The record gives the reactivity of an RNA of 177 nucleotides to DMS and 2A3. It was measured as part of the RMDB libraries RFM100 and RFMREP. For DMS the reverse transcriptase was MarathonRT. The reactions ran in a buffer of 150 mM KOAc, 10 mM MgCl2 and 150 mM bicine (pH 8.5), at 24 C.
RNA sequence: GGGAACGACUCGAGUAGAGUCGAAAAGAUCUCUCCCCCCUCUGAUUGGCUGUUAGUAAGCUGGGAAACUUAUCAGUAACAGAACAAUCAGUAUGAUGACCUGGUGCAUCAUAACCCUUUCCUUAUUUAAAUGUCAACAUUUCGAUGUUGACAUUUAAAAAGAAACAACAACAACAAC
Reactivity to DMS in 0.01 (KOAc 150mM, MgCl2 10mM, bicine 150mM(pH8.5), 24C), signal-to-noise 4, nucleotides 027 to 126: g030a130u030c070u010c020u010c000c000c010c000c010c050u000c000u010g000a030u000u000g000g010c000u020g000u010u010a070g010u000a020a020g010c040u030g010g040g000a180a120a140c030u000u020a030u010c300a180g000u000a010a010c010a000g000a070a100c020a010a010u000c000a000g010u000a030u000g000a040u000g010a050c010c140u010g010g020u050g000c000a000u000c000a020u000a040a180c060c080c060u020u010u040c060c030u010u010a120u000u000
Reactivity to 2A3 in 0.01 (KOAc 150mM, MgCl2 10mM, bicine 150mM(pH8.5), 24C), signal-to-noise 9, nucleotides 027 to 126: g070a070u030c030u000c010u020c040c000c000c000c000c000u010c000u000g000a000u010u000g020g020c000u000g010u010u000a020g020u030a040a020g010c030u050g090g090g030a050a060a010c020u030u020a030u130c040a110g060u040a010a000c000a010g030a100a060c000a000a000u000c000a000g010u030a030u030g010a010u010g030a030c020c180u170g130g030u300g040c010a010u000c010a010u030a070a080c030c000c000u020u080u070c020c010u120u070a250u140u050